[RMDB]
RNA sequence: GGGAACGACUCGAGUAGAGUCGAAAAUAAAACAGUGCGUGGUAGCACUACCAUGACCAUGUUUCGGCACAUGGUCAGCCGAGUACAGCUUCGCCUGUACUCAGCGAACAACAUCAACAACAAAAAAGCUAUAUAUGGACUUCGGUCCAUAUAUAGCAAAAGAAACAACAACAACAAC
Reactivity to 2A3 in 0.01 (KOAc 150mM, MgCl2 10mM, bicine 150mM(pH8.5), 24C), signal-to-noise 2, nucleotides 027 to 126: u110a000a090a000a020c030a020g000u020g000c010g030u110g120g140u180a030g000c010a010c000u010a030c000c020a090u090g000a000c000c020a000u020g060u000u120u190c170g160g050c100a000c000a000u010g000g000u000c010a000g060c010c010g000a000g010u000a000c010a000g000c060u180u200c170g020c030c020u010g000u000a010c000u000c010a000g000c000g070a050a020c010a040a020c000a070u180c020a030a080c020a000a010c000a030a190a000a060a020a020
Reactivity to DMS in 0.01 (KOAc 150mM, MgCl2 10mM, bicine 150mM(pH8.5), 24C), signal-to-noise 4, nucleotides 027 to 126: u020a070a070a070a100c130a020g030u000g010c010g030u000g030g010u020a120g010c010a010c020u010a110c070c080a290u010g000a010c000c000a010u000g020u000u000u010c190g020g000c170a170c010a010u000g000g000u000c010a050g020c010c040g000a010g000u000a000c000a030g000c020u010u000c300g030c220c000u000g000u000a000c000u010c000a000g010c010g000a080a070c060a020a010c070a100u000c110a040a060c130a020a030c040a010a030a160a040a090a090

The record gives the reactivity of an RNA of 177 nucleotides to 2A3 and DMS. The reactions ran in a buffer of 150 mM KOAc, 10 mM MgCl2 and 150 mM bicine (pH 8.5), at 24 C. Values cover nucleotides 27 to 126.